[RMDB]
RNA sequence: GGGAACGACUCGAGUAGAGUCGAAAACCCGCGCUGGUUGCGAUUCGUAGGUUACGUCUACGUUAAAACGUUAAACAGUUUAAAUUAACUGCAAACGAAAACUCAUACGCUGUAGCUGCUUAGUUCAGCCCAGCUGCCAAUAGACUGCCUGCCCGUGCCACAGAUGUGUGUUCGCACACAUCUGUGGAAAAGAAACAACAACAACAAC
Reactivity to 2A3 in 0.01 (KOAc 150mM, MgCl2 10mM, bicine 150mM(pH8.5), 24C), signal-to-noise 2, nucleotides 027 to 156: c020c000c010g000c020g000c020u170g140g010u140u140g010c000g010a070u080u130c020g000u010a000g040g010u060u060a040c090g050u000c040u000a000c000g000u000u020a050a100a000a000c020g000u040u020a110a200a000c010a010g010u060u030u070a170a300a180u130u140a100a000c010u010g000c110a140a020a000c000g060a020a090a020a040c110u160c060a070u060a120c130g010c010u030g050u100a080g000c000u000g000c010u150u090a030g060u180u040c020a000g000c060c000c000a000g000c010u020g070c010c000a040a000u040a000g080a030c000u000g000c000c000u000g000c010c000c010g020u090g030